[RMDB]
Chemical mapping of a 207-nucleotide RNA with 2A3. For 2A3, 1,499 sequencing reads were counted.
RNA sequence: GGGAACGACUCGAGUAGAGUCGAAAAGCGACUACGCUCUCGCUGCCUAAGCGACGGCUAGUCUGUCGGACCGGGAACGCCCUCGCCCCGGACCCCGGCAUCAGCUAGAGGGAUCAACCGAUGAGUUCGGUCGCGGGGCUCAUCGGGACAUCAACAGGUUUCAGAAUUUGUUCGCAAAUUCUGAAACAAAAGAAACAACAACAACAAC
Reactivity to 2A3 in 0.01 (KOAc 150mM, MgCl2 10mM, bicine 150mM(pH8.5), 24C), signal-to-noise 2, nucleotides 027 to 156: g130c050g010a010c010u010a000c240g000c000u010c000u000c000g000c010u100g030c030c160u160a110a020g000c010g010a020c030g010g000c000u000a000g000u010c010u000g000u000c000g000g000a020c000c000g000g000g010a040a000c020g070c000c000c010u010c000g000c010c010c000c010g030g000a080c070c060c000c000g020g010c030a120u060c050a070g130c060u240a010g010a010g010g000g000a020u110c050a050a050c000c000g000a000u000g000a000g010u020u030c010g010g210u090c070g030c080g050g000g010g010c000u010c000a000u000c000g010g010g000a010c020a040u200c070a060a140c060a170g100
Reactivities are given for positions 27 through 156.
The reactions ran in a buffer of 150 mM KOAc, 10 mM MgCl2 and 150 mM bicine (pH 8.5), at 24 C.